Notes:
Structure probing data (DMS and 2A3) for a 177-nucleotide construct. 2A3 adducts were read by reverse transcription with SuperScript II with manganese. Values are in units of 0.01, from 0 to 300, in steps of 10. For DMS the reverse transcriptase was MarathonRT. The reactions ran in a buffer of 150 mM KOAc, 10 mM MgCl2 and 150 mM bicine (pH 8.5), at 24 C.
RNA sequence: GGGAACGACUCGAGUAGAGUCGAAAAAGCUCGGGCUUCGGGGUCGCCGGCGCUCUGGCAAUAGUGCGGCGCACUUACAACAGAGCGGGGCAGGUCUUACCCGCUCGUGGCACAUGCUACGUGCGUCCGCCCUUGGGUCGUUCGCGACCCGAGGGCGAAAAGAAACAACAACAACAAC
Reactivity to DMS in 0.01 (KOAc 150mM, MgCl2 10mM, bicine 150mM(pH8.5), 24C), signal-to-noise 1, nucleotides 027 to 126: a050g000c000u000c160g000g000g000c020u010u000c030g000g030g050g000u010c040g030c000c000g000g010c180g000c060u000c030u000g000g020c030a060a060u070a030g000u000g000c060g000g010c040g000c010a000c000u010u010a100c140a160a070c080a070g010a000g010c000g010g000g040g000c040a050g000g010u030c070u010u010a140c000c000c000g050c000u000c020g020u030g000g020c060a150c190a110u040g000c030u000a000c110g000u020g000c010g010u000c000
Reactivity to 2A3 in 0.01 (KOAc 150mM, MgCl2 10mM, bicine 150mM(pH8.5), 24C), signal-to-noise 1, nucleotides 027 to 126: a000g030c020u000c000g020g000g050c030u050u090c010g000g000g000g090u120c060g000c010c010g050g020c030g000c000u030c000u000g010g000c000a000a060u080a050g110u030g080c010g030g000c010g040c000a010c000u030u000a040c000a180a000c010a040g000a000g000c010g010g020g000g040c030a100g000g150u010c010u060u130a010c020c000c000g000c000u010c030g060u040g020g020c040a050c010a030u250g030c020u000a000c030g040u000g000c040g000u020c000